[RMDB]
This 177-nucleotide RNA was probed chemically with 2A3 and DMS. For 2A3, 11,626 sequencing reads were counted. It was measured as part of the RMDB library RFMREP. Reactivities are given for positions 27 through 126.
RNA sequence: GGGAACGACUCGAGUAGAGUCGAAAACAGAGGGGACGAGCGGUAUAGAAUACCGGUCUUGUGAACAUCAGAGGAUGUCAUGCGGCAGGGUUGCCAGUAACUCCCACGUACACGGGGCGAAGAGGAAGAUAUAUUUGUUGUUCGCAACAAAUAUAUCAAAAGAAACAACAACAACAAC
Reactivity to 2A3 in 0.01 (KOAc 150mM, MgCl2 10mM, bicine 150mM(pH8.5), 24C), signal-to-noise 5, nucleotides 027 to 126: c030a010g060a050g040g020g010g010a000c020g010a010g040c020g020g020u040a070u040a090g300a220a040u040a090c010c000g020g060u000c000u020u050g030u020g040a070a030c000a020u040c030a020g100a070g300g010a030u020g020u050c010a020u070g030c040g020g000c010a020g010g030g050u060u050g030c000c010a000g010u010a020a030c010u020c000c010c020a040c030g020u050a010c050a010c080g030g000g000g000c030g030a030a020g020a020g070g030a070a030
Reactivity to DMS in 0.01 (KOAc 150mM, MgCl2 10mM, bicine 150mM(pH8.5), 24C), signal-to-noise 8, nucleotides 027 to 126: c110a090g010a110g010g000g010g010a080c080g000a120g010c030g000g020u000a050u000a110g010a080a300u000a030c010c000g010g000u000c020u000u000g010u000g000a050a060c040a030u010c040a150g010a120g010g010a030u010g010u000c050a030u000g010c100g000g010c030a070g010g000g010u000u000g000c050c030a040g010u010a060a110c140u000c010c010c020a090c130g010u000a080c130a080c100g000g000g010g010c050g000a040a060g010a070g000g000a100a120